[RMDB]
Description:
An RNA of 177 nucleotides, treated with 2A3 and DMS and read out base by base. The RNA was probed in 150 mM KOAc, 10 mM MgCl2 and 150 mM bicine (pH 8.5) at 24 C. For 2A3 the reverse transcriptase was SuperScript II with manganese.
RNA sequence: GGGAACGACUCGAGUAGAGUCGAAAAGAUAUGGAUCCACCUACCCACCGGAGGAGGGAUUCGGAAACGAAUCCUACCCACCCUCACGAGGGUGGAUCCUAAGUCAAAACUUCGCUUCGGCGAAGAAGUUCAAGUGGAAGUUCGCUUCCACUUGAACAAAAGAAACAACAACAACAAC
Reactivity to 2A3 in 0.01 (KOAc 150mM, MgCl2 10mM, bicine 150mM(pH8.5), 24C), signal-to-noise 2, nucleotides 027 to 126: g080a020u210a190u300g020g020a000u000c000c010a000c000c000u230a300c030c020c050a040c020c030g000g020a040g000g030a010g000g020g000a010u030u000c030g040g010a060a050a000c020g010a020a010u030c010c020u050a090c050c040c010a070c010c010c000u010c000a300c120g030a020g000g000g000u000g000g010a000u000c010c000u000a000a000g070u010c100a040a000a180a240c020u020u010c000g000c000u070u040c090g120g000c040g020a000a010g010a020a020
Reactivity to DMS in 0.01 (KOAc 150mM, MgCl2 10mM, bicine 150mM(pH8.5), 24C), signal-to-noise 2, nucleotides 027 to 126: g020a140u010a220u000g000g000a000u010c000c010a020c000c030u000a230c060c020c040a300c130c020g000g010a020g000g010a050g010g020g000a010u000u000c000g000g010a070a090a110c020g020a010a000u000c000c000u000a090c040c030c160a300c040c000c010u000c000a160c020g000a070g000g000g010u000g000g010a000u000c000c000u000a020a100g030u010c140a040a070a130a100c000u000u000c010g010c000u000u020c190g050g000c000g000a020a000g020a030a060